An RNA of 177 nucleotides, treated with 2A3 and DMS and read out base by base. DMS adducts were read by reverse transcription with MarathonRT. Values are in units of 0.01, from 0 to 300, in steps of 10. Source: RMDB library M2PK50, as collected in RNAgym.

[RMDB]
RNA sequence: GGGAACGACUCGAGUAGAGUCGAAAACAUGGAGUCUUCGGACUCCAUGCACUACCGAAAUAAUGCCUCGGUAUAAAAGGCAAACCCUAGGAAACAAGGGAACGAUGUCACGAUUCGUCGUGACAAAGGAUUGGUAUGUAUUCGUACAUACCAAUCCAAAAGAAACAACAACAACAAC
Reactivity to 2A3 in 0.01 (KOAc 150mM, MgCl2 10mM, bicine 150mM(pH8.5), 24C), signal-to-noise 9, nucleotides 027 to 126: c000a000u000g000g010a010g000u000c020u060u070c290g080g000a000c000u000c000c000a000u000g000c000a030c020u050a010c000c010g030a040a060a070u210a080a050u090g000c010c010u010c010g000g000u070a110u170a300a060a000a010g010g000c000a010a060a190c010c000c000u030a030g120g150a130a100a050c070a070a030g010g000g040a030a020c070g100a100u110g000u000c000a000c000g010a010u040u060c170g070u010c000g000u090g000a000c010a000a010a000
Reactivity to DMS in 0.01 (KOAc 150mM, MgCl2 10mM, bicine 150mM(pH8.5), 24C), signal-to-noise 6, nucleotides 027 to 126: c020a010u000g010g000a010g010u000c000u000u020c210g020g020a010c000u000c000c000a010u000g010c070a230c040u000a030c000c000g020a060a120a090u000a110a120u000g010c000c000u000c000g010g000u000a120u010a020a030a070a050g010g000c000a030a050a180c020c000c000u000a210g000g000a120a100a150c080a110a030g000g010g020a090a080c220g010a130u010g000u000c000a010c000g010a030u000u010c160g020u000c010g000u000g000a000c010a020a060a080